The record gives the reactivity of an RNA of 177 nucleotides to DMS. Values are in units of 0.01, from 0 to 300, in steps of 10. Source: RMDB library OK2TRN, as collected in RNAgym. Reactivities are given for positions 27 through 126.
[RMDB]
RNA sequence: GGGAACGACUCGAGUAGAGUCGAAAAAGCGAUAAUUCCGCGCAUAUGCUGGUCGAAGCCUCACAAGCGGAGAACAGCCAUAUUGUGUCUAUUUUGCUUAACCGCAAUUACGGGCAACAUUCAGCGAACGUCACCGCGUGUUCGCACGCGGUGACGUAAAAGAAACAACAACAACAAC
Reactivity to DMS in 0.01 (KOAc 150mM, MgCl2 10mM, bicine 150mM(pH8.5), 24C), signal-to-noise 1, nucleotides 027 to 126: a040g000c000g000a120u030a050a040u000u000c260c240g000c010g080c010a040u000a000u000g010c000u040g000g040u000c000g000a300a240g000c010c000u010c300a050c300a200a200g040c000g000g000a300g000a010a000c040a000g000c070c090a010u000a040u000u010g000u000g000u000c070u070a130u000u000u000u000g000c030u000u000a240a180c140c140g000c120a080a080u000u080a030c300g000g000g000c040a170a070c080a050u000u050c050a070g000c040g000a090